[RMDB]
RNA sequence: GGGAACGACUCGAGUAGAGUCGAAAAUAUUAAACUUUUACCGAUAUGACACUGAUUCUUACACCGCUAGCGAUUACACUUUUUAUGUUUUACAUCACCGUUCGGCACGGAAGAAGACAUUUUAAAACUGCCAGCGUUCUGGUUAUCUGGUUAAAUAGUGCAUUCUAAUUUUCGAAUUAGAAUGCACAAAAGAAACAACAACAACAAC
Reactivity to DMS in 0.01 (KOAc 150mM, MgCl2 10mM, bicine 150mM(pH8.5), 24C), signal-to-noise 1, nucleotides 027 to 156: u000a110u010u010a170a110a170c090u010u000u000u020a150c030c030g020a070u000a040u000g000a080c020a240c070u010g030a110u000u000c040u000u000a070c080a070c090c000g020c080u000a070g020c090g000a120u020u010a100c050a040c020u000u000u000u000u000a020u010g010u010u000u000u000a080c060a050u010c090a090c070c010g010u000u000c100g030g010c070a110c020g050g000a050a070g000a130a160g020a000c020a020u010u000u010u000a000a110a110a090c070u020g010c020c040a110g050c090g050u000u000c050u000g010g000u000u010a070u000c010u020g040g050u010u000a100a080a050u010a110
Reactivity to 2A3 in 0.01 (KOAc 150mM, MgCl2 10mM, bicine 150mM(pH8.5), 24C), signal-to-noise 3, nucleotides 027 to 156: u180a020u060u160a090a120a100c050u030u100u080u170a050c020c000g020a030u020a040u170g050a020c020a000c090u090g050a150u120u080c000u040u090a040c040a020c020c020g010c060u020a010g000c020g090a050u090u150a020c040a070c070u050u060u080u140u050a040u030g050u000u030u040u020a120c090a080u070c020a020c010c010g050u120u120c050g100g000c050a010c030g020g020a030a010g040a010a000g070a030c010a030u100u150u030u150a070a120a020a050c070u080g020c000c010a020g010c030g070u070u060c040u050g020g000u000u050a040u050c030u040g030g060u110u150a040a050a190u230a100
This 207-nucleotide RNA was probed chemically with DMS and 2A3. 2A3 adducts were read by reverse transcription with SuperScript II with manganese. For DMS, 1,682 sequencing reads were counted. It was measured as part of the RMDB library OK3TST.